Notes:
The record gives the reactivity of an RNA of 177 nucleotides to 2A3 and DMS. It was measured as part of the RMDB library OK2TST. For 2A3, 1,198 sequencing reads were counted.
[RMDB]
RNA sequence: GGGAACGACUCGAGUAGAGUCGAAAAUUUGCGCAAAGUAUUUCCUUUGUCAUAAAAAUAAUACUUCCAGACACUAUGAAGUUGUGAAACAUAAUGUUAACUUCUCCAUACUUUGGAUAAGGAAAUACCAUAUACAAAGCUUCGGCUUUGUAUAUGGAAAAGAAACAACAACAACAAC
Reactivity to 2A3 in 0.01 (KOAc 150mM, MgCl2 10mM, bicine 150mM(pH8.5), 24C), signal-to-noise 2, nucleotides 027 to 126: u020u010u110g030c070g020c030a010a090a030g020u030a130u050u080u220c000c000u030u050u050g030u020c010a060u100a090a210a030a070a000u220a060a050u060a130c040u090u010c010c000a030g010a040c030a000c060u030a050u020g010a010a020g010u020u020g000u040g060a020a010a010c020a060u300a300a060u210g000u020u030a030a010c000u010u000c000u000c010c010a010u000a170c090u060u120u090g010g010a030u010a050a050g030g020a000a020a020u010a030
Reactivity to DMS in 0.01 (KOAc 150mM, MgCl2 10mM, bicine 150mM(pH8.5), 24C), signal-to-noise 2, nucleotides 027 to 126: u000u010u010g010c190g000c060a100a030a110g000u000a070u020u000u010c060c000u000u000u000g000u000c060a130u000a000a070a070a070a100u000a070a100u000a170c140u010u000c000c000a050g000a030c040a070c210u010a020u000g010a040a040g000u000u010g010u000g010a070a060a010c000a100u000a100a130u010g010u010u000a250a060c010u000u000c030u000c030c000a020u000a080c130u000u000u000g010g010a030u010a010a050g000g000a040a050a030u000a100

Values cover nucleotides 27 to 126.